The data come from the RNA Mapping Database (RMDB), library TTRDEL. Structure probing data (DMS and 2A3) for a 177-nucleotide construct. Reactivities are given for positions 27 through 126. For 2A3, 2,884 sequencing reads were counted.

RNA sequence: GGGAACGACUCGAGUAGAGUCGAAAAGAUAUGGAGUUCUAAGAGCAUCGAUCAUACACGAGAUCGGAAACGAUUAAGUGUAUGGGAGCUUAUGAACUCCUAAGUCAAAGGCAAGUUCGCUUGCCAAGCAAUACUAUGCCUUCGGGCAUAGUAUUGCAAAAGAAACAACAACAACAAC
Reactivity to DMS in 0.01 (KOAc 150mM, MgCl2 10mM, bicine 150mM(pH8.5), 24C), signal-to-noise 2, nucleotides 027 to 126: g000a040u010a300u010g010g010a080g000u000u000c000u010a060a190g030a040g010c020a220u010c100g000a110u020c010a000u000a040c000a010c000g010a300g030a010u000c020g020g010a170a080a120c000g000a000u010u020a010a270g020u000g000u000a000u010g000g000g000a020g020c000u000u000a300u000g010a020a010c010u010c000c000u000a010a040g010u000c040a090a090a120g000g000c010a000a000g010u000u010c280g010c000u000u000g000c010c010a070a120
Reactivity to 2A3 in 0.01 (KOAc 150mM, MgCl2 10mM, bicine 150mM(pH8.5), 24C), signal-to-noise 1, nucleotides 027 to 126: g030a000u030a060u130g000g020a020g030u040u010c040u070a300a210g050a010g090c000a130u300c070g110a070u090c010a010u010a010c000a000c000g030a050g000a020u010c020g010g020a090a030a030c010g000a000u030u020a050a010g010u000g000u010a000u000g000g010g000a010g010c000u020u050a070u100g000a000a010c000u030c000c000u000a030a010g030u040c060a160a080a050g040g000c000a000a000g030u050u160c230g090c150u000u000g030c000c000a000a000